The data come from the RNA Mapping Database (RMDB), libraries RFM100 and RFMREP. An RNA of 177 nucleotides, treated with DMS and 2A3 and read out base by base.

RNA sequence: GGGAACGACUCGAGUAGAGUCGAAAAUGGGAGGCUGAUACACAAAUUGGGCUGAAAUACUGCUCUACUUGUCACCAUGCCUCCCUAGAAUAAACUGCCUUUUGAUGACCGGGACGAAUUGAGUGAAUCUGUGAUGGUGAUUCGUCACCAUCACAGAAAAAGAAACAACAACAACAAC
Reactivity to DMS in 0.01 (KOAc 150mM, MgCl2 10mM, bicine 150mM(pH8.5), 24C), signal-to-noise 3, nucleotides 027 to 126: u000g000g000g020a040g000g020c000u010g010a110u010a120c300a050c020a010a000a100u010u000g020g000g010c000u010g000a120a160a100u020a060c300u050g030c000u000c020u000a070c150u000u000g010u000c150a170c160c030a020u020g010c000c000u000c010c000c010u010a000g000a070a040u010a070a060a090c070u020g000c030c020u010u000u010u010g010a070u010g020a040c070c030g000g000g020a090c050g010a050a070u050u000g000a080g010u020g010a090a110
Reactivity to 2A3 in 0.01 (KOAc 150mM, MgCl2 10mM, bicine 150mM(pH8.5), 24C), signal-to-noise 3, nucleotides 027 to 126: u090g000g010g000a000g000g010c000u010g000a050u080a130c050a000c000a050a020a030u080u060g000g000g000c000u000g080a030a000a020u220a040c230u120g000c000u000c000u020a020c030u030u010g030u010c030a060c070c030a060u220g000c000c000u000c000c000c000u010a000g010a010a020u160a040a060a010c060u070g060c000c010u060u100u040u110g100a080u060g030a020c010c050g010g010g020a010c040g040a050a050u130u110g030a020g080u120g040a020a080
Notes:
For 2A3 the reverse transcriptase was SuperScript II with manganese.